The record gives the reactivity of an RNA of 207 nucleotides to DMS and 2A3.
For DMS the reverse transcriptase was MarathonRT.
The reactions ran in a buffer of 150 mM KOAc, 10 mM MgCl2 and 150 mM bicine (pH 8.5), at 24 C.
[RMDB]
RNA sequence: GGGAACGACUCGAGUAGAGUCGAAAAAGAAUAUAAGAAAGCUUAUGAGAAGUCUAAAGGAAUUCACAACACACCGUUGGACAUGAUGUCAAUUGUUCAAGCCAAGAAAUGCCAGGUCCUGGUUAGCGACAUUGAUUAUCGCAAUUAUCUGCACCAACAUAUGAUGGUCGUUCGCGACCAUCAUAUGAAAAGAAACAACAACAACAAC
Reactivity to DMS in 0.01 (KOAc 150mM, MgCl2 10mM, bicine 150mM(pH8.5), 24C), signal-to-noise 1, nucleotides 027 to 156: a080g000a090a090u000a060u010a100a110g010a120a090a100g000c020u000u000a050u000g000a200g020a100a130g010u010c020u090a060a030a070g020g030a090a110u010u000c040a150c060a100a040c100a100c060a080c050c030g010u010u000g010g000a120c040a110u000g000a010u000g010u000c040a030a090u010u000g020u000u000c070a180a030g060c000c020a030a080g000a090a080a060u010g000c080c060a020g020g020u000c010c000u000g010g030u000u000a060g020c000g020a020c010a010u000u010g020a140u000u000a060u000c000g040c040a040a090u000u020a100u000c040u000g040c090a100c060c000a020a120
Reactivity to 2A3 in 0.01 (KOAc 150mM, MgCl2 10mM, bicine 150mM(pH8.5), 24C), signal-to-noise 2, nucleotides 027 to 156: a000g030a010a010u130a000u080a100a050g050a110a060a020g020c020u170u090a040u160g080a030g030a170a010g010u060c010u110a070a050a010g070g030a070a100u180u100c050a060c000a150a070c040a050c010a030c080c030g030u010u030g020g000a010c040a050u070g000a010u030g040u020c020a040a060u110u050g010u060u130c020a070a000g000c000c010a020a000g060a030a050a020u090g010c040c030a050g090g000u050c030c000u010g000g050u060u070a030g010c020g050a000c010a080u030u100g020a030u050u210a010u070c020g010c030a020a050u170u090a080u070c060u040g000c000a010c040c000a040a010